[RMDB]
The record gives the reactivity of an RNA of 177 nucleotides to DMS and 2A3. Values cover nucleotides 27 to 126. The RNA was probed in 150 mM KOAc, 10 mM MgCl2 and 150 mM bicine (pH 8.5) at 24 C. DMS adducts were read by reverse transcription with MarathonRT. For DMS, 3,283 sequencing reads were counted.
RNA sequence: GGGAACGACUCGAGUAGAGUCGAAAAGAUAUGGACGCUGCUUGCAAUGAUGGGUGGAAUAAUGUCGGAAUAUGUUCGGAAACGAACAUAUUCCGACUAUCCACCUUGAGCAACAGCGUCCUAAGUCCUUCUGUGUAUUCUUCGGAAUACACAGAAGAAAAGAAACAACAACAACAAC
Reactivity to DMS in 0.01 (KOAc 150mM, MgCl2 10mM, bicine 150mM(pH8.5), 24C), signal-to-noise 3, nucleotides 027 to 126: g020a120u010a300u010g010g010a040c000g000c000u000g010c280u000u000g040c010a300a210u010g020a150u000g000g000g000u000g010g010a060a080u010a170a080u000g020u000c000g000g020a020a000u000a000u000g000u000u000c000g000g000a120a100a300c010g000a000a010c000a010u000a000u000u010c000c000g030a010c000u000a010u000c000c000a020c000c000u000u000g000a120g010c000a000a040c000a010g000c000g020u000c000c000u000a020a120g000u010c060
Reactivity to 2A3 in 0.01 (KOAc 150mM, MgCl2 10mM, bicine 150mM(pH8.5), 24C), signal-to-noise 2, nucleotides 027 to 126: g060a060u120a070u220g000g000a000c000g010c010u040g050c060u030u030g040c050a250a300u150g040a060u100g080g010g000u030g040g140a090a170u300a300a120u300g000u010c020g000g070a000a010u090a000u000g010u000u000c030g000g060a180a120a050c000g020a010a010c020a000u000a000u000u010c000c000g030a000c010u000a000u030c000c000a000c010c000u000u010g000a010g050c000a000a000c010a000g010c000g020u000c000c000u000a000a000g000u000c000